[RMDB]
Structure probing data (2A3 and DMS) for a 177-nucleotide construct. For DMS the reverse transcriptase was MarathonRT. For 2A3, 1,471 sequencing reads were counted. It was measured as part of the RMDB library RFMREP. The DMS profile rests on 1,449 reads.

RNA sequence: GGGAACGACUCGAGUAGAGUCGAAAAAACCCUGCCGCCUGCCGGAACACUCUUCGCUCCGGACCAGCUCAGCCUCUGAUAAGCUGGACUCGGCACGCCCGCAACAAGCACCGAGGAGUUAAGAGAGCUCCUAUUGAUAGUUCGCUAUCAAUAGGAGAAAAGAAACAACAACAACAAC
Reactivity to 2A3 in 0.01 (KOAc 150mM, MgCl2 10mM, bicine 150mM(pH8.5), 24C), signal-to-noise 1, nucleotides 027 to 126: a000a000c010c000c010u030g040c030c020g060c030c010u050g040c030c000g040g030a080a020c000a020c030u050c050u130u140c060g010c010u000c000c010g060g000a030c010c020a000g000c020u020c020a000g050c010c000u140c020u040g110a120u030a210a000g010c010u010g000g030a070c050u000c020g000g020c040a070c040g030c010c000c000g060c030a020a100c020a120a000g070c000a030c060c000g030a020g010g000a010g040u020u110a110a040g040a000g010a020g020
Reactivity to DMS in 0.01 (KOAc 150mM, MgCl2 10mM, bicine 150mM(pH8.5), 24C), signal-to-noise 2, nucleotides 027 to 126: a050a040c020c000c030u000g020c010c010g030c090c040u010g040c060c020g000g000a080a030c080a100c080u010c090u000u010c080g010c120u010c020c020g000g020a200c020c030a040g000c000u000c100a070g000c030c050u020c070u000g000a070u010a080a060g010c020u000g000g010a140c070u000c020g010g000c110a090c100g000c030c010c010g000c160a100a080c080a120a090g010c070a080c020c020g020a080g030g000a070g000u010u020a080a040g010a070g010a250g000